[RMDB]
RNA sequence: GGGAACGACUCGAGUAGAGUCGAAAACACACAAUUUCGUCGCCAAUGGCAUUAGUUUGCACAAUUCGCUGGAACAAGAUGCCGACGUUGUCAUCCUGCUGCAUCGACCCGACGCCUUUGACCGCGACUGCCUGACGUCCUUCGGGACGUCAGGCAGAAAAGAAACAACAACAACAAC
Reactivity to 2A3 in 0.01 (KOAc 150mM, MgCl2 10mM, bicine 150mM(pH8.5), 24C), signal-to-noise 1, nucleotides 027 to 126: c080a010c040a020c000a100a270u090u060u000c140g090u040c020g000c050c040a060a140u110g000g000c000a000u000u220a130g050u070u050u160g080c060a030c060a170a150u160u010c080g000c040u000g080g040a000a000c000a100a140g060a000u050g000c010c000g040a030c070g040u080u140g030u070c030a030u030c000c000u040g010c000u030g000c020a000u000c000g010a080c000c000c000g030a040c010g070c000c000u020u070u090g020a020c070c070g020c010g030a040
Structure probing data (2A3) for a 177-nucleotide construct. The data come from the RNA Mapping Database (RMDB), library OK1LIB.